An RNA of 177 nucleotides, treated with 2A3 and DMS and read out base by base. Values are in units of 0.01, from 0 to 300, in steps of 10. Values cover nucleotides 27 to 126. The DMS profile rests on 3,332 reads. The RNA was probed in 150 mM KOAc, 10 mM MgCl2 and 150 mM bicine (pH 8.5) at 24 C.

[RMDB]
RNA sequence: GGGAACGACUCGAGUAGAGUCGAAAAAGAAAGAGAGCGUAGCACACACACAGACUAAGUCUGACACACACCUACGCUACAUGUGUGUGUGAAGUCGAGAUAACGACAAGUGUGUGUGAUGAAAAAACAUUAUCGUGACGUUCGCGUCACGAUAAUGAAAAGAAACAACAACAACAAC
Reactivity to 2A3 in 0.01 (KOAc 150mM, MgCl2 10mM, bicine 150mM(pH8.5), 24C), signal-to-noise 3, nucleotides 027 to 126: a010g110a010a040a010g140a000g000a010g000c030g010u020a000g030c010a000c000a000c000a000c000a000c010a000g010a010c030u090a170a040g020u040c000u010g030a010c010a000c000a010c010a000c010c000u070a020c010g000c060u090a030c040a030u050g050u000g000u010g000u000g010u000g020a030a000g000u010c010g020a040g020a300u190a200a060c020g010a010c040a160a230g000u000g010u010g000u000g000u010g020a010u050g050a030a050a010a000a010a000
Reactivity to DMS in 0.01 (KOAc 150mM, MgCl2 10mM, bicine 150mM(pH8.5), 24C), signal-to-noise 3, nucleotides 027 to 126: a080g010a050a080a030g010a060g000a090g020c030g020u000a040g000c000a020c000a010c000a000c000a010c010a050g000a020c030u010a110a140g020u010c010u000g020a120c020a020c000a010c010a000c000c030u000a010c020g010c150u000a050c110a030u000g000u010g030u000g030u000g020u010g000a030a110g000u010c000g020a200g010a110u030a060a130c040g010a010c020a060a030g010u010g010u000g000u000g010u000g010a040u000g000a000a040a080a050a040a080